[RMDB]
RNA sequence: GGGAACGACUCGAGUAGAGUCGAAAAAAUGGCGGAGUCCUAGGCACCACUACUCCAAGCGAUGUCGAAGCAAUGGCACAGUCCUAGGCAUCGUCCCUUCAUCCGAUGUCGAAGCAAUGGCGCAGUCGAUGGACAAAUAGUUCGCUAUUUGUCCAUCAAAAGAAACAACAACAACAAC
Reactivity to 2A3 in 0.01 (KOAc 150mM, MgCl2 10mM, bicine 150mM(pH8.5), 24C), signal-to-noise 3, nucleotides 027 to 126: a010a000u200g060g010c040g010g010a040g040u080c030c020u040a070g050g010c020a010c030c000a040c050u070a030c000u000c010c010a030a030g060c020g030a040u080g030u120c040g040a050a010g010c020a060a090u240g020g000c070a070c050a190g050u050c000c000u000a010g000g000c000a020u010c010g050u000c000c000c020u070u070c020a070u010c030c030g050a050u050g030u050c010g020a020a010g010c030a030a100u100g040g000c050g000c030a010g000u120c060
Reactivity to DMS in 0.01 (KOAc 150mM, MgCl2 10mM, bicine 150mM(pH8.5), 24C), signal-to-noise 4, nucleotides 027 to 126: a040a050u010g020g010c060g000g010a130g020u000c030c010u010a140g010g030c060a100c030c030a050c060u000a090c060u000c020c050a090a130g020c030g010a040u010g010u000c050g000a080a100g010c080a060a030u010g010g000c070a090c170a130g000u010c020c010u000a070g000g010c000a050u000c030g000u010c050c010c010u000u000c080a080u000c100c030g020a040u000g030u000c010g020a130a080g010c090a050a070u010g010g000c030g020c040a100g010u000c120

Description: Chemical mapping of a 177-nucleotide RNA with 2A3 and DMS. DMS adducts were read by reverse transcription with MarathonRT. Conditions: 150 mM KOAc, 10 mM MgCl2 and 150 mM bicine (pH 8.5), 24 C. Source: RMDB library VIROID, as collected in RNAgym. The 2A3 profile rests on 5,230 reads.